[RMDB]
RNA sequence: GGGAACGACUCGAGUAGAGUCGAAAAUUAUCACAUGGAUAGGAAUGAAUUCACGCAGCACCUCACUGUCUGUGACACUAGUAUUGGUGGGAAUUGUGACACUGUAUUUGGGAGUCAUGGUGCAGGCGCUAUAAAUUUCGUUCGCGAAAUUUAUAGCAAAAGAAACAACAACAACAAC
Reactivity to DMS in 0.01 (KOAc 150mM, MgCl2 10mM, bicine 150mM(pH8.5), 24C), signal-to-noise 5, nucleotides 027 to 126: u020u040a080u010c050a120c140a070u020g020g020a040u000a020g010g000a100a060u020g000a100a080u010u010c060a080c060g000c080a060g010c030a050c040c020u000c080a170c040u000g000u010c020u010g010u010g010a080c070a060c030u000a040g010u010a050u020u010g010g010u010g010g010g010a070a110u020u020g010u020g020a070c030a040c030u010g010u010a040u020u020u020g020g010g000a100g000u000c030a020u000g000g010u000g000c040a030g000g000c190
Reactivity to 2A3 in 0.01 (KOAc 150mM, MgCl2 10mM, bicine 150mM(pH8.5), 24C), signal-to-noise 7, nucleotides 027 to 126: u140u070a080u120c030a020c050a130u100g120g030a050u060a050g070g050a070a050u100g050a040a080u130u100c030a030c100g020c030a030g000c010a050c020c000u020c010a050c020u010g020u040c010u020g010u030g020a010c000a000c010u030a000g040u030a070u070u240g050g000u020g020g060g100a090a130u100u150g050u060g030a010c010a000c020u010g050u080a090u060u180u100g050g010g010a150g010u010c000a010u020g020g000u090g000c040a030g050g020c050